Overview:
Source: RMDB library RNAMAK, as collected in RNAgym. Structure probing data (2A3) for a 207-nucleotide construct. The reactions ran in a buffer of 150 mM KOAc, 10 mM MgCl2 and 150 mM bicine (pH 8.5), at 24 C. For 2A3, 604 sequencing reads were counted.

[RMDB]
RNA sequence: GGGAACGACUCGAGUAGAGUCGAAAACUCUGGUUCGCCAGAGACAUAGCGUACUACUGCGUGAGUAGGCGUUGAAAUUGUCAGACUUCCCAAAUAGGAAGUCUUGGAUUUAUGGAGCCUACGAACGCAGUAUCGCCUGGAACUCAUUCGUGAGUAAGAUGGUGCGUCUAUUCGUAGACGCACCAUCAAAAGAAACAACAACAACAAC
Reactivity to 2A3 in 0.01 (KOAc 150mM, MgCl2 10mM, bicine 150mM(pH8.5), 24C), signal-to-noise 1, nucleotides 027 to 156: c030u060c010u010g030g100u080u050c110g040c000c000a010g000a000g010a000c110a070u300a010g000c000g020u030a050c020u000a000c000u000g000c010g000u000g030a030g000u000a010g000g050c000g110u160u080g010a010a010a000u000u110g110u070c020a010g020a000c000u020u000c000c000c090a150a170a060u270a030g000g000a000a000g000u000c000u010u030g060g000a000u120u150u060a200u160g110g010a010g000c000c000u010a000c000g010a010a000c000g020c000a000g000u000a000u000c000g000c000c000u010g020g170a060a030c000u000c010a100u230u190c130g020u000g180a010g010u000a000a160